RNA sequence: GGGAACGACUCGAGUAGAGUCGAAAAUCAAGAGGACAACUUUAUACUAUCUGACUUCGGUUGUGCUCUUGACAUAGUCGACGAAGUCGAAUACAUGAAACUCAUUCAUGUAUUAAAGUUGACUAAAGAUAGUAGGGACAUUCGUGUCUUUACUAUCAAAAGAAACAACAACAACAAC
Reactivity to 2A3 in 0.01 (KOAc 150mM, MgCl2 10mM, bicine 150mM(pH8.5), 24C), signal-to-noise 9, nucleotides 027 to 126: u040c000a000a010g010a010g060g040a000c010a030a010c020u110u220u140a210u130a130c110u100a130u200c110u160g180a150c060u100u070c110g020g010u010u010g000u030g050c000u000c000u000u010g000a000c000a020u050a000g010u010c010g000a010c020g050a100a010g100u140c080g050a020a000u000a000c000a000u000g030a030a060a050c100u090c160a070u060u000c000a000u000g000u000a000u000u040a010a010a000g000u000u010g000a010c000u020a030a020a010
Reactivity to DMS in 0.01 (KOAc 150mM, MgCl2 10mM, bicine 150mM(pH8.5), 24C), signal-to-noise 9, nucleotides 027 to 126: u010c010a010a000g010a010g010g000a010c010a050a040c090u020u030u030a100u040a150c160u020a080u020c130u020g010a050c100u000u010c100g000g010u000u010g010u000g010c000u000c000u000u000g010a030c190a120u010a020g010u000c000g000a010c010g010a070a060g010u010c080g020a040a020u000a010c000a000u000g000a000a030a160c290u060c300a170u010u000c000a000u000g000u000a010u000u010a060a080a120g000u000u000g000a020c000u000a020a090a100